Chemical mapping of a 177-nucleotide RNA with 2A3 and DMS.
For DMS the reverse transcriptase was MarathonRT.
The RNA was probed in 150 mM KOAc, 10 mM MgCl2 and 150 mM bicine (pH 8.5) at 24 C.
Reactivities are given for positions 27 through 126.
2A3 adducts were read by reverse transcription with SuperScript II with manganese.
It was measured as part of the RMDB library OK2TRN.
For 2A3, 1,914 sequencing reads were counted.
RNA sequence: GGGAACGACUCGAGUAGAGUCGAAAACACGCAUGGCCGACAGAGAGGCCGGCCCUGCGCACAGCGCGAUGAUCGUGAUCGGCCACUGCGCAGCGCGAUCGUACGUACAGCAUGGCCCUGCGGCCGCACCGUGCAUGGUCUUCGGACCAUGCACGGUAAAAGAAACAACAACAACAAC
Reactivity to 2A3 in 0.01 (KOAc 150mM, MgCl2 10mM, bicine 150mM(pH8.5), 24C), signal-to-noise 2, nucleotides 027 to 126: c070a020c030g070c070a080u170g010g010c010c010g090a190c060a040g160a010g050a070g180g000c020c000g000g000c000c000c030u050g020c030g060c000a100c060a130g090c150g030c090g140a030u050g010a030u120c040g030u050g060a060u090c090g050g010c040c010a210c170u150g010c080g000c030a000g040c010g000c020g010a000u080c040g030u120a250c050g000u020a070c060a020g040c040a100u090g020g020c000c010c000u100g000c020g000g000c000c020g000c010
Reactivity to DMS in 0.01 (KOAc 150mM, MgCl2 10mM, bicine 150mM(pH8.5), 24C), signal-to-noise 1, nucleotides 027 to 126: c040a050c220g000c090a070u020g000g010c000c000g000a040c050a080g030a230g000a130g000g010c010c000g020g010c000c040c070u010g000c000g010c070a070c210a140g050c050g000c030g020a050u010g000a040u000c080g010u000g000a130u020c050g020g010c000c010a060c260u010g000c030g010c020a050g020c070g000c040g000a080u010c070g000u000a070c030g000u000a020c240a130g020c050a050u000g010g020c000c030c010u010g000c090g000g010c000c000g040c150